[RMDB]
RNA sequence: GGGAACGACUCGAGUAGAGUCGAAAAGGAUGCUAGGAGUUGGGGGAGACCGAAGCGAGGAGGAAAGCAAAGAAAGCAACGGGGCUAGCGAGUGGAUGUUCCUCCCCCCGAAGGUCCCGAGUGAGGCGUACGGUGAUGUUCGCAUCACCGAAAAGAAACAACAACAACAAC
Reactivity to 2A3 in 0.01 (KOAc 150mM, MgCl2 10mM, bicine 150mM(pH8.5), 24C), signal-to-noise 5, nucleotides 027 to 129: g030g000a030u080g060c030u050a010g030g020a000g020u100u090g010g040g000g000g000a010g000a010c000c000g030a010a000g060c030g030a030g010g020a030g010g010a030a070a010g020c010a030a030a060g050a050a070a000g020c010a010a080c050g000g000g050g000c020u020a010g070c010g020a020g010u050g040g040a090u060g040u040u040c000c000u020c000c020c000c010c000c000g010a070a010g040g000u010c000c010c010g000a020g020u100g020a040g000g040c040g040u050a020
Reactivity to DMS in 0.01 (KOAc 150mM, MgCl2 10mM, bicine 150mM(pH8.5), 24C), signal-to-noise 6, nucleotides 027 to 129: g020g020a050u030g000c040u000a040g030g020a080g020u050u060g050g010g030g020g020a080g000a090c060c020g030a150a070g030c140g010a080g000g030a060g020g040a020a060a070g030c170a070a090a100g040a080a080a010g050c060a110a170c070g010g000g000g000c080u000a070g010c090g030a060g000u000g000g030a130u060g000u010u010c060c010u020c020c000c010c020c040c020g020a080a090g000g000u000c010c000c050g020a070g020u000g000a060g000g040c100g040u000a070